[RMDB]
RNA sequence: GGGAACGACUCGAGUAGAGUCGAAAACUAAAAUCAGGUCGCAUCAGUAUCGAAUGGCGUCUGGUGAUGGUCGCGGUCCUGUUGUUUAGCCGCAGCCGACUAACUUUUUGAGUCACUCAAGGCGUAAGACCAGGUAUAAUUUCGAUUAUACCUGGUCAAAAGAAACAACAACAACAAC
Reactivity to DMS in 0.01 (KOAc 150mM, MgCl2 10mM, bicine 150mM(pH8.5), 24C), signal-to-noise 5, nucleotides 027 to 126: c020u000a040a050a170a030u000c050a030g010g000u010c030g030c030a070u000c070a100g010u010a080u010c140g000a090a080u010g020g010c030g010u000c020u000g010g020u000g000a160u000g010g010u000c070g020c050g010g000u000c060c080u000g000u000u010g000u000u000u000a140g000c010c010g010c060a090g020c070c040g010a050c070u010a060a070c130u000u000u000u010u010g000a080g000u010c030a110c040u010c060a070a080g010g010c060g000u010a090a100
Reactivity to 2A3 in 0.01 (KOAc 150mM, MgCl2 10mM, bicine 150mM(pH8.5), 24C), signal-to-noise 5, nucleotides 027 to 126: c000u020a030a010a030a090u040c010a020g030g080u180c010g020c020a040u040c010a070g190u210a130u180c100g080a180a090u110g110g020c020g020u000c010u010g030g010u030g000a040u090g020g000u020c050g000c030g060g010u040c000c030u060g040u120u030g020u020u080u070a010g010c000c000g000c030a010g060c040c030g040a030c030u030a050a090c030u110u100u050u120u300g100a030g040u010c010a020c020u050c040a040a080g050g000c030g040u050a080a000